[RMDB]
RNA sequence: GGGAACGACUCGAGUAGAGUCGAAAAUGUUUUUAAAAGCGAAUGCCAGUGAGUGAAAUGCCAGCUCCCUGUACAGUUACUAGAGCUCCUGGGAAUGCAUGGCCAGUGACACAAGUGAGAAUUGGAUACUUUUUCUUAACUUCGGUUAAGAAAAAGUAAAAGAAACAACAACAACAAC
Reactivity to DMS in 0.01 (KOAc 150mM, MgCl2 10mM, bicine 150mM(pH8.5), 24C), signal-to-noise 1, nucleotides 027 to 126: u030g010u030u020u020u000u000a020a130a150a120g040c040g030a040a020u000g010c040c010a000g040u030g000a060g010u000g000a080a080a150u010g010c020c010a080g000c040u010c020c030c000u010g030u000a070c200a070g010u010u000a080c110u000a090g000a110g000c070u000c040c030u000g010g040g010a130a050u010g040c010a030u000g010g000c000c050a010g060u000g000a070c020a080c060a010a090g000u000g000a100g010a050a140u000u040g010g010a210u000